[RMDB]
RNA sequence: GGGAACGACUCGAGUAGAGUCGAAAACCUCUACACCUUCGGCCAGGACUGGCUGGAGAGAUAUCUUAACAGACCUUAUGACCGGCUGCGUGGCGCCGUCGUAACGCAGGAAACCUGACCAAAGGAAACGACUGAGGUCAUUCGUGACCUCAGUCGUAAAAGAAACAACAACAACAAC
Reactivity to 2A3 in 0.01 (KOAc 150mM, MgCl2 10mM, bicine 150mM(pH8.5), 24C), signal-to-noise 1, nucleotides 027 to 126: c030c010u010c030u110a070c040a020c000c000u000u030c000g000g000c000c000a060g070g220a300c220u010g000g050c040u000g000g000a000g000a000g010a030u090a010u140c050u000u050a060a000c040a030g130a160c000c000u100u020a060u090g000a000c000c030g040g020c060u110g000c060g110u060g080g000c030g050c000c060g080u120c030g010u000a000a090c000g000c050a000g080g000a230a000a000c000c000u040g010a050c000c080a080a000a100g010g000a150a040
Chemical mapping of a 177-nucleotide RNA with 2A3. Reactivities are given for positions 27 through 126. The 2A3 profile rests on 579 reads. 2A3 adducts were read by reverse transcription with SuperScript II with manganese. It was measured as part of the RMDB library OK1LIB.